[RMDB]
RNA sequence: GGGAACGACUCGAGUAGAGUCGAAAAGCCGACGGUUUACCGCAAACCUUGGCAAGAUGGAAUCAUCUUAGCCUCCGAGCCCUUGGAUGCUUGUCCUAAUUGGUUAUUGGUAGAGCCGCAAACCAUACCAUGCAGUAGUCUUCGGACUACUGCAUGGAAAAGAAACAACAACAACAAC
Reactivity to DMS in 0.01 (KOAc 150mM, MgCl2 10mM, bicine 150mM(pH8.5), 24C), signal-to-noise 2, nucleotides 027 to 126: g010c090c030g010a160c050g020g000u000u000u000a040c070c050g020c180a060a030a080c000c010u010u000g000g010c010a030a000g020a010u000g000g000a210a150u030c020a000u000c000u000u010a080g010c010c040u000c100c020g010a100g000c040c050c120u000u010g000g000a060u000g000c070u020u020g020u020c030c030u000a040a080u000u010g010g020u000u000a180u020u010g000g020u000a070g010a080g020c000c020g010c080a060a040a100c090c070a070u000a160
Reactivity to 2A3 in 0.01 (KOAc 150mM, MgCl2 10mM, bicine 150mM(pH8.5), 24C), signal-to-noise 3, nucleotides 027 to 126: g040c020c020g040a070c050g000g000u020u030u060a050c020c040g010c090a050a010a020c000c000u020u070g010g000c020a000a000g000a020u050g060g180a260a190u290c000a000u000c000u030u030a030g010c000c020u030c050c000g020a050g000c040c020c000u060u060g040g030a050u040g030c010u040u090g050u070c010c020u080a130a090u090u060g030g010u020u040a130u040u180g040g000u040a080g050a030g190c010c000g000c060a050a020a000c010c010a010u060a130
The data come from the RNA Mapping Database (RMDB), library OK2TST. Chemical mapping of a 177-nucleotide RNA with DMS and 2A3. The 2A3 profile rests on 2,904 reads.